[RMDB]
RNA sequence: GGGAACGACUCGAGUAGAGUCGAAAAUACGAGUUUGCCAGGACCUAUCAAGUUUGGAGUCAUCCGGCCCGUAGGGGAGAAUAGAACACCGGGGGGUGAUCCACCAGGAGAAGGAGCGGAGAACCCAUGAGCGUAGAGUUCGCUCUACGCAAAAGAAACAACAACAACAAC
Reactivity to 2A3 in 0.01 (KOAc 150mM, MgCl2 10mM, bicine 150mM(pH8.5), 24C), signal-to-noise 8, nucleotides 027 to 129: u180a030c050g000a020g050u040u120u090g090c020c010a050g010g030a050c010c010u070a080u110c070a080a040g040u030u080u090g020g010a010g010u020c020a080u030c030c000g000g000c000c010c000g060u100a110g010g000g050g000a030g010a030a060u140a070g040a030a010c020a030c040c010g000g000g000g000g000g000u020g000a000u000c010c000a020c020c020a030g020g040a030g010a040a020g020g010a010g020c030g010g010a040g020a040a050c010c000c020a050u110g050a010
Reactivity to DMS in 0.01 (KOAc 150mM, MgCl2 10mM, bicine 150mM(pH8.5), 24C), signal-to-noise 7, nucleotides 027 to 129: u050a070c120g020a080g030u060u000u020g040c020c000a080g030g020a070c050c040u000a080u050c030a070a070g020u020u030u070g030g010a060g020u030c090a090u040c010c010g010g010c050c030c020g050u040a050g010g000g010g000a000g030a040a040u070a070g030a060a100c050a030c080c060g020g010g010g000g010g030u020g000a070u000c020c030a060c140c060a050g000g030a060g020a030a040g000g000a000g060c110g040g020a080g030a080a070c000c000c000a060u060g020a160